[RMDB]
RNA sequence: GGGAACGACUCGAGUAGAGUCGAAAACUCCACACGGACACCAUCCCGGCGCGGGUGCAACCGCGGUUGCACGGGUAGACUAUCGUCGAGGCGUUAUCACGCCACGGGUACUAUACGCGGAGCCGAGGCCUAGGAGUAAAUUCGUUUACUCCUAGGCAAAAGAAACAACAACAACAAC
Reactivity to DMS in 0.01 (KOAc 150mM, MgCl2 10mM, bicine 150mM(pH8.5), 24C), signal-to-noise 3, nucleotides 027 to 126: c080u000c000c020a090c140a130c090g000g010a070c090a050c070c050a130u010c040c060c000g020g000c070g020c060g010g010g000u000g040c110a090a120c020c060g040c300g020g000u000u000g000c060a070c000g000g000g020u000a040g010a110c250u000a060u000c030g000u020c020g020a060g030g010c000g010u010u010a090u010c140a080c030g020c010c030a030c020g010g000g010u000a050c060u000a120u000a040c050g000c030g020g010a140g010c020c030g010a120g000
Reactivity to 2A3 in 0.01 (KOAc 150mM, MgCl2 10mM, bicine 150mM(pH8.5), 24C), signal-to-noise 3, nucleotides 027 to 126: c020u000c010c010a050c020a020c060g070g040a030c010a010c100c010a050u080c020c040c000g110g000c010g010c040g070g030g000u090g000c030a070a050c020c020g090c130g110g020u070u130g020c070a030c050g010g080g000u030a010g010a020c040u050a050u170c060g140u040c010g060a040g020g010c020g030u060u170a160u300c090a010c020g030c000c010a020c020g020g000g010u020a050c020u050a010u050a030c030g000c050g120g030a030g000c000c020g010a050g060
Structure probing data (DMS and 2A3) for a 177-nucleotide construct. Reactivities are given for positions 27 through 126. It was measured as part of the RMDB library OK2TRN.